[RMDB]
RNA sequence: GGGAACGACUCGAGUAGAGUCGAAAAGUGUAUGUGAGGGAGUAGGAUGUAUGGUUGUUAGAUAGACAACUACAAUCUUUUCUCACAACAGACAGAAAAGGGAAAUAACAGUUCGCUGUUAUUUCCCGCUUGGAGACAUGUUCGCAUGUCUCCAAGCAAAAGAAACAACAACAACAAC
Reactivity to 2A3 in 0.01 (KOAc 150mM, MgCl2 10mM, bicine 150mM(pH8.5), 24C), signal-to-noise 3, nucleotides 027 to 126: g040u020g000u040a180u210g010u030g000a020g030g010g010a050g110u190a050g030g180a010u020g030u090a040u190g120g030u010u010g010u010u010a090g070a300u130a110g040a020c000a010a000c010u020a020c020a000a010u000c020u030u010u010u000c000u010c000a000c010a010a000c000a000g130a010c030a020g210a030a080a020a050g000g000g000a020a000a000u000a020a020c000a010g010u060u090c160g050c070u000g000u010u000a000u000u000u020c000c000c000
Reactivity to DMS in 0.01 (KOAc 150mM, MgCl2 10mM, bicine 150mM(pH8.5), 24C), signal-to-noise 2, nucleotides 027 to 126: g030u000g010u000a080u010g010u000g000a030g010g000g010a030g020u010a100g000g000a080u000g000u010a120u010g030g010u000u000g000u000u000a080g020a230u020a230g010a030c000a000a000c000u010a050c070a060a070u000c000u010u000u000u000c000u010c000a010c000a040a020c020a040g010a120c170a130g000a030a040a120a090g030g000g000a010a010a030u000a000a000c000a000g010u000u000c230g020c000u000g000u000u000a000u000u000u000c000c010c000